[RMDB]
RNA sequence: GGGAACGACUCGAGUAGAGUCGAAAAGCAUAACUGUUCGCAGUUAUGCAAAACACGAAGCUGGAAACAGACGCAGUGAAACAAACAAAACCGAAAACAAAAAAAGCCAACAGUUCGCUGUUGGCAAUCAUACUAAUUCCUUCGGGAAUUAGUAUGAAAAAGAAACAACAACAACAAC
Reactivity to DMS in 0.01 (KOAc 150mM, MgCl2 10mM, bicine 150mM(pH8.5), 24C), signal-to-noise 2, nucleotides 027 to 126: g020c000a000u000a000a020c010u010g000u020u020c220g040c000a030g010u000u000a010u010g000c010a040a020a110a100c010a040c030g010a120a300g000c020u010g000g010a140a150a160c060a050g010a070c070g010c100a230g010u000g010a050a000a120c150a060a100a080c090a070a040a110a090c090c050g010a080a010a140a060c110a020a020a130a090a060a070a150g000c010c010a010a020c010a000g000u000u020c230g020c000u010g000u000u000g000g010c000a000a010
Reactivity to 2A3 in 0.01 (KOAc 150mM, MgCl2 10mM, bicine 150mM(pH8.5), 24C), signal-to-noise 2, nucleotides 027 to 126: g010c010a010u010a000a000c000u010g020u080u110c230g010c080a000g020u000u000a000u010g000c000a010a060a000a030c020a010c000g030a050a020g000c010u000g000g020a060a040a050c020a010g090a080c030g000c080a000g010u030g060a130a080a020c050a010a150a020c030a010a030a030a020c050c010g070a090a060a030a010c100a070a180a040a040a000a030a010g010c000c000a000a000c010a000g050u060u100c210g060c080u010g000u010u010g000g030c000a000a000